[RMDB]
RNA sequence: GGGAACGACUCGAGUAGAGUCGAAAACUGGCUGUCUGCGGUCGUGGCCGAUACCAGCUCCGUGGAACGCCCGGGCCCAUCCGAUUCUGGGGCGGGUCGCGCCGCAGAAGACCGCAAGUGUCUGGACGGCUGCCGGAAAAUGCGCUUCUCCACCGCCCUUGGACCUUAAAUUCGUUUAAGGUCCAAGAAAAGAAACAACAACAACAAC
Reactivity to 2A3 in 0.01 (KOAc 150mM, MgCl2 10mM, bicine 150mM(pH8.5), 24C), signal-to-noise 1, nucleotides 027 to 156: c010u040g010g020c000u020g020u140c030u000g000c000g020g000u140c010g000u070g000g010c000c040g020a020u150a300c040c040a070g000c060u030c020c020g080u140g080g000a100a060c030g120c110c090c030g130g070g070c070c100c030a040u150c000c050g090a100u160u090c040u190g000g000g000g040c000g030g000g040u080c050g020c000g000c040c000g000c030a040g020a010a000g010a020c010c000g010c050a060a020g040u050g000u180c010u010g040g000a000c040g000g000c010u040g030c020c000g070g010a020a160a000a020u080g020c020g040c000u060u040c000u000c050c020a050c040c000g040c000c000